[RMDB]
RNA sequence: GGGAACGACUCGAGUAGAGUCGAAAAUUUAUUGCCGGCCACUUUUGCUGCAGGUGCACCAUCAACUUGCAACGGCAGCAAAGACAAAACUGUAAAACCGCUGGCAGCGCUCGGCUUUUGUCCUGGCGGAUAGCCUGGAUUUCGAUCCAGGCUAUCCAAAAGAAACAACAACAACAAC
Reactivity to DMS in 0.01 (KOAc 150mM, MgCl2 10mM, bicine 150mM(pH8.5), 24C), signal-to-noise 1, nucleotides 027 to 126: u040u000u070a000u000u000g000c000c020g000g000c000c210a070c030u070u000u000u000g010c000u000g000c000a000g010g010u000g010c010a100c100c010a100u100c300a110a190c090u090u000g000c000a030a000c020g000g010c010a000g040c000a000a000a010g000a080c160a090a090a060a110c130u010g010u000a140a030a290a130c190c060g040c000u030g000g010c010a050g000c050g020c050u000c040g000g000c090u030u020u020u000g040u010c010c000u030g000g000c300
Reactivity to 2A3 in 0.01 (KOAc 150mM, MgCl2 10mM, bicine 150mM(pH8.5), 24C), signal-to-noise 1, nucleotides 027 to 126: u080u140u060a100u020u200g090c030c000g000g010c050c010a030c060u030u060u000u070g000c000u000g000c000a080g000g160u000g010c000a000c080c010a160u190c040a060a080c100u040u020g000c020a030a020c010g010g020c000a000g000c010a020a000a020g000a050c100a000a180a020a030c100u090g050u150a030a050a040a160c070c030g050c120u030g010g000c000a000g000c030g010c030u080c020g000g000c000u070u090u060u050g040u120c020c000u050g020g040c000

Record summary
The record gives the reactivity of an RNA of 177 nucleotides to DMS and 2A3. For 2A3 the reverse transcriptase was SuperScript II with manganese. The 2A3 profile rests on 764 reads. It was measured as part of the RMDB library OK1LIB. Conditions: 150 mM KOAc, 10 mM MgCl2 and 150 mM bicine (pH 8.5), 24 C.